[RMDB]
RNA sequence: GGGAACGACUCGAGUAGAGUCGAAAAGCGUACUACCCUUGUGGUACACGAGGUGGGACGGAUGUAUCCCAAAUAGGAUACGGAUGUCCCACUACCCACCGUGUACGUAACAUCAAGGGUAUCGCAAAAGUUUUCUGUAGUUCGCUACAGAAAACAACAUCGUGGAGUUGUUCGCAACUCCACGAUGAAAAGAAACAACAACAACAAC
Reactivity to DMS in 0.01 (KOAc 150mM, MgCl2 10mM, bicine 150mM(pH8.5), 24C), signal-to-noise 1, nucleotides 027 to 156: g030c020g020u000a070c050u000a030c000c000c000u000u000g000u000g000g040u000a010c000a050c030g070a140g060g020u040g020g010g090a040c010g010g020a300u030g010u000a050u010c080c000c040a050a120a130u000a080g000g070a000u000a050c030g050g030a300u000g020u000c010c000c010a000c000u000a000c000c040c020a300c200c000g020u000g060u000a040c000g010u000a050a120c110a070u000c000a000a050g050g010g060u000a000u020c030g000c010a120a070a060a180g050u000u000u000u000c000u010g010u000a040g000u000u000c260g000c010u000a020c000a000g000a000a000a000a010c000a090a150
Reactivity to 2A3 in 0.01 (KOAc 150mM, MgCl2 10mM, bicine 150mM(pH8.5), 24C), signal-to-noise 2, nucleotides 027 to 156: g000c000g020u070a130c040u000a000c010c000c000u020u020g020u030g070g010u000a000c000a000c000g010a050g020g040u010g020g020g010a000c030g000g000a040u040g000u040a000u050c020c010c020a150a300a030u150a040g010g000a000u000a020c010g020g010a020u030g000u030c020c040c000a000c000u010a000c010c000c000a000c000c000g000u010g000u000a000c030g020u000a060a100c050a140u160c000a030a040g010g030g000u010a020u060c000g000c010a020a020a020a020g000u020u000u000u000c000u000g010u000a010g030u020u110c240g000c100u000a010c020a000g000a000a020a000a000c020a000a010
An RNA of 207 nucleotides, treated with DMS and 2A3 and read out base by base. Values cover nucleotides 27 to 156. The 2A3 profile rests on 1,312 reads. Conditions: 150 mM KOAc, 10 mM MgCl2 and 150 mM bicine (pH 8.5), 24 C.